[RMDB]
This 177-nucleotide RNA was probed chemically with 2A3 and DMS. DMS adducts were read by reverse transcription with MarathonRT. The RNA was probed in 150 mM KOAc, 10 mM MgCl2 and 150 mM bicine (pH 8.5) at 24 C. The DMS profile rests on 2,162 reads.

RNA sequence: GGGAACGACUCGAGUAGAGUCGAAAAACGCGAGGAUUCGUCCUCGCGUACAUAAGUGAGUUCGCCGGAUAGCUGCCUAAGUGAGUUCGCCGGAUACCUGCCAAGCACAUAGUUUCGACUAUGUGAACCAUUCGUAUGGGUUCGCCCAUACGAAUGGAAAAGAAACAACAACAACAAC
Reactivity to 2A3 in 0.01 (KOAc 150mM, MgCl2 10mM, bicine 150mM(pH8.5), 24C), signal-to-noise 2, nucleotides 027 to 126: a000c000g010c020g000a000g030g000a040u040u000c180g060u010c080c000u010c000g000c000g010u000a000c000a040u220a030a070g070u000g110a090g030u030u070c050g000c040c000g030g000a050u080a050g040c030u150g070c040c060u130a220a030g020u050g130a040g030u040u040c030g000c030c010g050g040a020u030a020c010c010u040g110c010c010a050a020g070c000a010c000a010u010a000g000u020u070u040c100g010a020c010u000a000u010g000u000g010a020a030
Reactivity to DMS in 0.01 (KOAc 150mM, MgCl2 10mM, bicine 150mM(pH8.5), 24C), signal-to-noise 2, nucleotides 027 to 126: a030c010g000c010g030a000g010g000a060u000u020c200g030u000c010c000u000c010g020c010g000u010a000c130a070u010a080a070g020u000g000a120g010u000u000c040g020c080c020g010g000a060u000a150g010c050u010g000c060c060u000a090a110g030u000g000a080g010u000u000c040g010c080c000g010g000a110u000a060c050c000u000g000c040c090a080a080g020c010a010c010a000u000a010g010u000u000u020c180g010a040c000u020a010u000g010u000g000a060a130